The data come from the RNA Mapping Database (RMDB), library OK3TST.
The record gives the reactivity of an RNA of 207 nucleotides to 2A3.
For 2A3 the reverse transcriptase was SuperScript II with manganese.
For 2A3, 548 sequencing reads were counted.
As a SHAPE reagent, 2A3 marks flexible, mostly unpaired nucleotides at the ribose 2'-OH.
RNA sequence: GGGAACGACUCGAGUAGAGUCGAAAAGAUUUGGCCGAGGGGCGGGGUGAGGACAGCGCAGGCUCAGCUUCUCAGCUGGAAGAGGAAGUCCCGAGUGCUGGCGUCUGCGGCCCCCAUGGUGACCAGACCGACUUCCGCCCGACCCGCCCACCUCUAACCAUAUCGAUAUCUUCGGAUAUCGAUAUGGAAAAGAAACAACAACAACAAC
Reactivity to 2A3 in 0.01 (KOAc 150mM, MgCl2 10mM, bicine 150mM(pH8.5), 24C), signal-to-noise 1, nucleotides 027 to 156: g010a000u050u070u050g060g050c040c060g030a090g020g000g010g010c050g020g010g020g000u200g030a160g010g010a050c030a030g050c100g010c040a010g000g080c030u010c040a000g030c030u180u130c100u030c020a040g010c040u000g020g020a020a000g040a080g060g050a010a100g030u090c020c040c010g050a060g030u100g070c000u000g010g020c040g020u070c040u070g110c070g060g240c030c000c000c000c000a020u080g020g000u010g040a200c030c000a000g020a010c000c000g000a000c010u020u000c040c000g030c000c000c000g010a010c010c000c000g030c040c020c000a050c020c030u000c000u010a050a040